This 207-nucleotide RNA was probed chemically with DMS and 2A3.
For 2A3, 5,699 sequencing reads were counted.
The data come from the RNA Mapping Database (RMDB), library M2RFPK.
Conditions: 150 mM KOAc, 10 mM MgCl2 and 150 mM bicine (pH 8.5), 24 C.
2A3 adducts were read by reverse transcription with SuperScript II with manganese.
For DMS, 6,327 sequencing reads were counted.
For DMS the reverse transcriptase was MarathonRT.
[RMDB]
RNA sequence: GGGAACGACUCGAGUAGAGUCGAAAACGUUGUCAUCGACAACACCCUAUCCAUUCAUGCUCUGUAAGGAUGCGCCGAAAGGUGAGCAAGCCCGAGUUGCCCAGACCUGAAAUGCAACACUUUAGAGAAAACCCGAAGCAGUUCGCUGCUUCGGGAAGAAAAUACAUGUGUUCGCACAUGUAUUUUCAAAAGAAACAACAACAACAAC
Reactivity to DMS in 0.01 (KOAc 150mM, MgCl2 10mM, bicine 150mM(pH8.5), 24C), signal-to-noise 3, nucleotides 027 to 156: c070g020u000u010g020u000c020a150u010c070g030a080c020a050a050c000a070c010c020c020u000a130u020c010c040a100u010u010c070a150u010g020c020u000c010u000g000u000a140a070g010g000a100u000g010c060g030c020c030g020a120a090a100g030g030u000g030a140g020c020a100a170g010c010c020c050g000a120g000u000u010g020c000c030c050a130g010a050c010c020u030g010a070a070a120u000g020c050a060a080c040a120c050u000u000u000a070g000a120g010a080a060a090a130c010c000c000g000a000a030g000c000a030g030u000u020c260g030c000u000g000c000u010u000c000g010g020g000a000a000
Reactivity to 2A3 in 0.01 (KOAc 150mM, MgCl2 10mM, bicine 150mM(pH8.5), 24C), signal-to-noise 6, nucleotides 027 to 156: c070g000u000u000g010u020c090a230u140c280g020a000c000a020a000c010a060c010c000c020u060a100u070c040c020a080u070u150c020a050u150g030c020u030c010u060g080u090a040a030g030g020a040u030g010c010g000c010c020g080a100a050a010g020g010u030g030a040g020c040a050a020g010c010c030c010g100a080g060u040u040g030c000c010c020a030g070a090c010c000u050g030a060a070a050u090g010c020a050a040c020a040c140u090u130u140a080g010a000g000a100a060a040a060c000c000c000g000a000a000g000c000a000g020u070u130c170g050c100u000g000c000u000u000c000g000g010g000a000a000